[RMDB]
RNA sequence: GGGAACGACUCGAGUAGAGUCGAAAAGGGAUAGCUCUAAAUCUGUCCGAAAUUUGACCUACGGGCUAUAUCGUCCAACAUUUGACCUGGCUGAUGCUGGCCAAUCAUGCAGAGACGCUGCUCAGCCGCAGCAUACUAACUUCGGUUAGUAUGCUGCAAAAGAAACAACAACAACAAC
Reactivity to 2A3 in 0.01 (KOAc 150mM, MgCl2 10mM, bicine 150mM(pH8.5), 24C), signal-to-noise 7, nucleotides 027 to 126: g100g000g020a030u050a010g010c020u020c070u200a090a160a230u060c040u070g050u030c030c010g040a090a110a050u100u050u070g030a030c000c000u020a050c050g000g050g000c030u050a040u000a010u270c060g040u020c020c030a050a050c040a270u080u080u210g090a090c010c030u030g000g000c000u010g020a070u300g010c060u170g070g000c000c000a000a020u040c060a060u250g170c100a010g020a010g010a080c060g020c000u020g010c000u000c010a000g000c000c010
Reactivity to DMS in 0.01 (KOAc 150mM, MgCl2 10mM, bicine 150mM(pH8.5), 24C), signal-to-noise 3, nucleotides 027 to 126: g010g000g000a000u000a000g000c160u000c040u010a050a070a110u000c070u000g000u000c020c070g020a100a070a160u000u020u030g000a300c020c010u000a050c180g060g000g010c110u000a040u010a040u000c050g000u000c000c010a090a040c140a040u000u040u050g000a160c150c020u000g000g000c010u000g010a060u040g000c060u060g030g000c000c030a060a170u000c030a050u040g020c300a110g020a070g000a300c300g000c070u000g000c010u000c000a030g010c030c050

This 177-nucleotide RNA was probed chemically with 2A3 and DMS.
The data come from the RNA Mapping Database (RMDB), library OK1LIB.
The RNA was probed in 150 mM KOAc, 10 mM MgCl2 and 150 mM bicine (pH 8.5) at 24 C.
The 2A3 profile rests on 4,912 reads.